[RMDB]
RNA sequence: GGGAACGACUCGAGUAGAGUCGAAAAGUUGAGCGGUCGACUUCAGAGGGGAGUGUGAUCCUGGUACCGCCGUAGAAACUGGAUUACGACGUCUACCCGGGAUUCAAACCCGGCCCCUCUCAGAGGUGACUCUGAGUGAAAGGUCUGUGCUAAGCACCAUAUUCAUGUAGUUCGCUACAUGAAUAUGAAAAGAAACAACAACAACAAC
Reactivity to 2A3 in 0.01 (KOAc 150mM, MgCl2 10mM, bicine 150mM(pH8.5), 24C), signal-to-noise 5, nucleotides 027 to 156: g040u050u060g020a020g010c040g020g060u120c060g050a070c040u120u080c180a070g050a130g130g040g020g010a110g030u150g050u090g070a090u050c010c020u010g010g030u040a060c020c030g010c000c010g010u050a050g230a090a130a030c040u060g030g000a050u100u110a070c050g010a010c020g150u030c040u020a050c000c030c000g040g000g010a100u170u160c070a080a070a170c010c000c000g080g020c010c000c000c010u000c000u000c000a000g000a000g000g050u110g030a050c000u000c000u000g020a010g010u050g030a130a080a000g030g010u010c060u060g020u030g010c070u190a100a040g020c000a000c020
Reactivity to DMS in 0.01 (KOAc 150mM, MgCl2 10mM, bicine 150mM(pH8.5), 24C), signal-to-noise 2, nucleotides 027 to 156: g030u010u000g020a220g010c020g000g000u010c020g020a060c020u000u020c040a090g010a120g000g010g040g020a250g040u000g000u020g000a080u000c020c000u010g020g000u000a070c080c020g030c100c030g020u000a040g010a150a090a200c070u010g020g020a290u010u000a080c010g010a030c030g050u000c030u000a120c060c020c010g020g010g010a130u020u000c150a080a110a230c030c030c030g060g010c010c000c060c010u000c000u000c000a010g010a070g050g000u020g000a290c020u000c000u000g000a050g010u000g030a100a110a080g020g000u000c030u050g030u000g010c050u000a040a170g010c010a130c060